[RMDB]
RNA sequence: GGGAACGACUCGAGUAGAGUCGAAAAGCGGCGGCUGGCGGUGCUCCGGGCGGCCGUCGUCGGGUGCCUAUCGGACGGCGGCGCGGGCCUGCUCGAGGUCGAGACGGCGGAGGAGGGCGAACUGUCCGCCUCCGUCCGUCUCUCGGCCAAGCCGGUGGUUAGGGAUACUAUUCGUAGUAUCCCUAACAAAAGAAACAACAACAACAAC
Reactivity to 2A3 in 0.01 (KOAc 150mM, MgCl2 10mM, bicine 150mM(pH8.5), 24C), signal-to-noise 2, nucleotides 027 to 156: g060c060g120g000c000g000g020c020u010g000g070c050g060g090u230g020c060u220c050c010g230g300g180c060g270g010c000c000g020u000c000g000u000c010g020g050g040u090g140c030c110u300a030u070c040g080g000a000c000g000g000c000g000g000c010g000c010g030g000g000c000c040u000g010c050u060c090g090a100g000g030u010c010g000a000g000a000c030g000g000c000g000g000a010g000g010a010g000g050g000c010g060a180a150c190u300g020u010c010c000g000c000c000u030c000c000g000u000c000c000g000u000c000u010c000u000c000g000g000c000c000a000a000g000c010c000g020g070u050g070
Conditions: 150 mM KOAc, 10 mM MgCl2 and 150 mM bicine (pH 8.5), 24 C.
Structure probing data (2A3) for a 207-nucleotide construct.